[RMDB]
This 177-nucleotide RNA was probed chemically with DMS and 2A3. For 2A3, 995 sequencing reads were counted. For 2A3 the reverse transcriptase was SuperScript II with manganese. It was measured as part of the RMDB library OK2TST.
RNA sequence: GGGAACGACUCGAGUAGAGUCGAAAAUGUACCGUUUGAAGAGUCACUGCCGUUCCGCACUGCGGCCUUGCGCCACGGGAUUGCGCCGAUCUUUAUCUGCCCGCCUAAUGCAGAUGAUGAUUUAUUGACGCACGGAUGUAUUCGUACAUCCGUGCGUAAAAGAAACAACAACAACAAC
Reactivity to DMS in 0.01 (KOAc 150mM, MgCl2 10mM, bicine 150mM(pH8.5), 24C), signal-to-noise 2, nucleotides 027 to 126: u000g000u010a090c050c020g010u000u000u010g020a100a040g030a160g000u000c040a080c110u010g010c040c020g030u010u000c030c030g030c060a080c060u000g030c120g010g020c030c070u000u000g000c100g010c010c040a090c060g000g020g000a140u010u000g010c080g010c040c080g020a060u000c010u000u010u000a030u010c030u010g000c040c180c100g020c100c070u020a050a110u020g010c000a040g000a020u000g000a050u000g000a060u010u010u010a080u020u040g020
Reactivity to 2A3 in 0.01 (KOAc 150mM, MgCl2 10mM, bicine 150mM(pH8.5), 24C), signal-to-noise 1, nucleotides 027 to 126: u110g040u060a080c060c050g000u080u130u150g160a120a030g010a030g060u050c020a030c100u080g020c000c000g000u060u000c040c040g120c010a130c110u180g010c050g000g000c000c030u050u180g070c100g000c020c000a020c050g070g000g020a050u080u130g020c040g020c030c040g030a010u000c000u000u080u070a010u010c000u000g000c040c050c050g030c060c100u150a130a060u140g020c000a020g000a010u000g000a010u020g000a050u050u040u110a220u140u110g050